This 207-nucleotide RNA was probed chemically with 2A3.
RNA sequence: GGGAACGACUCGAGUAGAGUCGAAAAGACUGAUUCGUCAGUCAACCAACCUUUGUGUUAGCAGGUAUUGUCAGAAGCACAGGCCCAUUGGGCCUGUUCCCUUCUUGGAUUUAUACCGGGAGCUAACACUCUGGUGCAAUAGCCAUUUCGAUGGCAACUACAGGCUCCCGUUCGCGGGAGCCUGUAGAAAAGAAACAACAACAACAAC
Reactivity to 2A3 in 0.01 (KOAc 150mM, MgCl2 10mM, bicine 150mM(pH8.5), 24C), signal-to-noise 1, nucleotides 027 to 156: g010a000c030u030g000a000u040u120c170g040u030c050a010g010u000c020a050a070c030c020a030a030c010c000u070u000u030g000u000g000u030u000a000g000c020a020g010g000u000a030u020u030g020u010c030a030g000a020a000g010c190a000c000a000g030g040c000c100c180a300u240u300g010g000g060c040c000u000g010u020u020c000c000c000u000u000c040u040u100g160g000a030u200u300u120a010u030a000c000c000g010g080g030a030g000c000u000a010a000c000a010c000u040c000u000g040g010u040g030c020a110a160u030a130g000c000c000a070u150u050u120c150g110a040u020g020g000c000a070a000

Source: RMDB library RNAMAK, as collected in RNAgym. The RNA was probed in 150 mM KOAc, 10 mM MgCl2 and 150 mM bicine (pH 8.5) at 24 C.